RNA sequence: GGGAACGACUCGAGUAGAGUCGAAAAGUCUUCGAGUUCGUCAUCACCUUGGAAACGUAGGCUUCAUGUACGUGAUCGAAAACGAACCCGAUGUUCACCGGCGCGCCGUCGUAGCGAACGCCUCGGCGGUCAACUAUCUCCUGGAGAAUGCAAGUCACCACAGUAACUGAUUCGUCAGUUACUGUGGAAAAGAAACAACAACAACAAC
Reactivity to 2A3 in 0.01 (KOAc 150mM, MgCl2 10mM, bicine 150mM(pH8.5), 24C), signal-to-noise 4, nucleotides 027 to 156: g030u020c000u010u000c010g000a010g010u010u010c000g010u020c030a050u010c010a030c010c020u030u060g080g050a070a140a020c080g110u170a130g120g000c050u030u030c030a030u050g080u140a070c060g020u010g030a040u120c130g050a090a090a020a090c020g000a000a020c000c000c000g010a030u020g050u070u070c080a090c160c000g060g010c080g000c030g000c010c000g010u020c010g000u040a020g020c030g050a160a090c150g000c030c010u020c020g000g000c000g000g010u020c030a040a010c020u060a050u050c040u020c040c090u090g040g020a050g000a080a030u070g030c080a100a030g040u070c030a010
Reactivity to DMS in 0.01 (KOAc 150mM, MgCl2 10mM, bicine 150mM(pH8.5), 24C), signal-to-noise 2, nucleotides 027 to 156: g020u000c040u000u000c020g000a010g020u000u010c000g040u000c030a140u000c040a060c020c050u020u010g000g000a070a060a060c050g020u010a110g040g040c040u010u000c040a050u010g020u000a060c100g000u000g010a060u020c090g010a040a060a080a060c000g020a020a050c020c000c010g000a070u000g030u000u000c020a120c000c020g010g000c060g010c090g020c010c000g060u010c020g030u000a020g030c030g000a140a160c150g020c000c010u000c040g010g020c060g050g000u000c060a110a060c040u000a110u000c040u000c020c020u010g000g010a150g000a110a120u000g000c030a100a120g000u000c040a280

Structure probing data (2A3 and DMS) for a 207-nucleotide construct. Values cover nucleotides 27 to 156. For DMS, 4,511 sequencing reads were counted. It was measured as part of the RMDB library OK3TST.